[RMDB]
RNA sequence: GGGAACGACUCGAGUAGAGUCGAAAAGGAGGAAGUGGCUGGAAAGCGAACUGCGCGAAGCGGGUCCGGCCGGCGCUGGCCGGCACCCGCAACUCGGCGCCCAGAGGCACUAAGCGCGGGGGGCGUAUGCUCAGUCAUAAUUCGUUAUGACUGAGCAAAAAGAAACAACAACAACAAC
Reactivity to DMS in 0.01 (KOAc 150mM, MgCl2 10mM, bicine 150mM(pH8.5), 24C), signal-to-noise 2, nucleotides 027 to 126: g010g000a050g000g000a060a060g020u010g010g000c040u000g000g000a070a100a080g020c040g000a130a160c090u010g000c030g010c030g020a080a160g020c010g010g000g010u000c000c000g000g000c000c000g000g010c160g010c130u020g000g020c000c020g000g010c070a000c000c000c000g030c030a020a020c080u000c010g020g000c050g000c040c060c050a140g010a080g000g010c050a040c140u030a080a110g000c030g020c010g000g000g000g000g000g000c110g000u010a100